[RMDB]
RNA sequence: GGGAACGACUCGAGUAGAGUCGAAAAACUUGUAUAGGCGAUUAAUAAAUCUUCUGUAAAUGCUGUAAGAGGAUUACCCCUUGAGGUUUCAGCACUAGGCUGCUCUACCGAUUAAUCAAUGCAUUUGUAACGGAAAGACAGUUCGCUGUCUUUCCAACUAUACGCUCUACUUCGGUAGAGCGUAUAGAAAAGAAACAACAACAACAAC
Reactivity to DMS in 0.01 (KOAc 150mM, MgCl2 10mM, bicine 150mM(pH8.5), 24C), signal-to-noise 1, nucleotides 027 to 156: a040c050u000u000g030u000a120u000a110g010g040c030g000a090u000u000a040a110u000a100a080a080u000c020u000u000c010u010g020u000a120a020a110u000g040c060u000g000u010a090a080g000a090g000g020a150u000u000a130c030c030c010c020u010u000g010a150g000g010u000u010u010c020a040g020c010a070c080u000a080g000g010c030u000g000c030u000c010u010a050c000c040g020a120u000u010a070a160u010c040a080a160u010g000c020a120u000u000u000g000u010a060a080c140g000g000a020a030a050g000a020c000a040g060u000u000c300g040c010u000g030u000c030u000u000u000c010c000a010a040
Reactivity to 2A3 in 0.01 (KOAc 150mM, MgCl2 10mM, bicine 150mM(pH8.5), 24C), signal-to-noise 2, nucleotides 027 to 156: a000c080u170u110g080u090a120u100a200g030g010c020g050a070u100u090a130a070u170a120a110a030u000c030u120u020c010u050g130u150a080a220a080u090g020c050u060g040u130a070a000g010a000g010g050a010u000u050a040c000c030c000c010u020u060g060a060g060g000u060u120u090c020a010g010c010a030c070u100a080g060g080c040u030g000c010u040c020u050a050c000c000g020a030u030u130a020a030u070c110a060a130u090g020c040a020u010u050u180g060u030a050a050c050g010g000a000a000a000g010a000c000a010g020u020u100c180g070c090u000g010u000c000u000u000u010c000c000a000a000